The record gives the reactivity of an RNA of 177 nucleotides to DMS and 2A3. DMS adducts were read by reverse transcription with MarathonRT. Reactivities are rounded to 0.1 and cut off at 0 and 3. Source: RMDB libraries RFM100 and RFMREP, as collected in RNAgym. Reactivities are given for positions 27 through 126. As a SHAPE reagent, 2A3 marks flexible, mostly unpaired nucleotides at the ribose 2'-OH. Conditions: 150 mM KOAc, 10 mM MgCl2 and 150 mM bicine (pH 8.5), 24 C.

[RMDB]
RNA sequence: GGGAACGACUCGAGUAGAGUCGAAAACACCUGACCAGUAUUGUUGGCUGGUGCAACACAGUGGUGAGCUGACAAUAAGCCCAGCUUUUAGGAAACAGGGCUGUCCUACAUGUGGAUGGCUCUGUGCUAACACCCCUACUUUCGAGUAGGGGUGUUAAAAAGAAACAACAACAACAAC
Reactivity to DMS in 0.01 (KOAc 150mM, MgCl2 10mM, bicine 150mM(pH8.5), 24C), signal-to-noise 5, nucleotides 027 to 126: c140a160c020c010u000g020a110c040c030a070g020u010a080u000u000g010u000u000g010g020c000u000g000g030u020g000c050a090a120c180a080c110a070g010u020g020g030u010g000a160g010c020u000g000a070c160a090a110u010a140a130g000c040c040c010a070g000c070u010u000u010u010a090g010g000a140a090a020c000a010g010g000g010c000u000g030u000c000c010u000a110c290a090u060g010u010g000g000a010u000g010g000c000u020c000u000g000u000g000c130
Reactivity to 2A3 in 0.01 (KOAc 150mM, MgCl2 10mM, bicine 150mM(pH8.5), 24C), signal-to-noise 4, nucleotides 027 to 126: c090a020c000c020u030g040a070c010c000a010g040u040a080u170u030g010u040u000g030g000c020u000g000g040u060g000c010a060a040c040a010c020a110g080u120g030g110u130g060a040g000c000u010g040a040c050a060a170u270a080a030g010c020c040c010a020g020c000u050u070u090u120a120g070g060a150a040a010c010a000g010g000g020c000u010g010u000c010c000u120a230c050a300u270g070u090g140g000a000u000g000g020c000u000c000u000g000u010g000c000